The record gives the reactivity of an RNA of 207 nucleotides to DMS and 2A3.
It was measured as part of the RMDB library OK3TST.
For DMS the reverse transcriptase was MarathonRT.
The 2A3 profile rests on 1,737 reads.

RNA sequence: GGGAACGACUCGAGUAGAGUCGAAAACAACCUGGGAGUUACGUCCGGAUAUUGCGCCAGGGGCAAUAGAACGGUAGACAUCAACUGAUGCGAGAGCAUCUCAACUUAUGGACCUUAGUGUAUCGCAAGACGACCGGUCCGGUCGGAAUUGCGUAGAAUCGAGUGAUAGUUUCGACUAUCACUCGAUAAAAGAAACAACAACAACAAC
Reactivity to DMS in 0.01 (KOAc 150mM, MgCl2 10mM, bicine 150mM(pH8.5), 24C), signal-to-noise 2, nucleotides 027 to 156: c080a080a250c030c000u000g030g010g020a190g050u000u000a050c090g020u000c030c040g010g010a110u000a050u000u020g030c000g000c060c030a120g030g040g020g000c040a040a090u000a110g010a060a120c110g020g040u000a200g040a080c070a190u000c030a100a160c020u020g020a010u000g000c000g030a290g000a240g040c000a030u010c020u000c080a030a080c140u000u000a100u010g010g010a060c030c020u000u020a120g010u000g020u000a060u000c020g030c040a030a080g000a250c010g000a040c050c030g050g010u010c080c040g070g030u000c010g010g020a060a130u010u000g000c080g020u000a120g000a060
Reactivity to 2A3 in 0.01 (KOAc 150mM, MgCl2 10mM, bicine 150mM(pH8.5), 24C), signal-to-noise 3, nucleotides 027 to 156: c040a010a070c010c020u030g020g050g010a080g010u100u040a040c050g090u000c030c000g000g000a030u040a020u060u090g030c110g040c030c080a090g000g020g020g020c020a030a000u010a090g100a150a020c000g010g020u030a040g020a080c020a070u050c040a070a080c090u080g000a000u030g010c020g000a050g000a010g040c000a030u000c020u010c020a060a200c050u130u170a040u150g090g010a030c000c010u050u070a070g040u010g030u150a060u160c000g000c000a000a000g050a030c000g000a000c000c000g060g130u110c080c110g000g000u000c010g000g030a200a100u020u000g000c000g010u000a030g010a020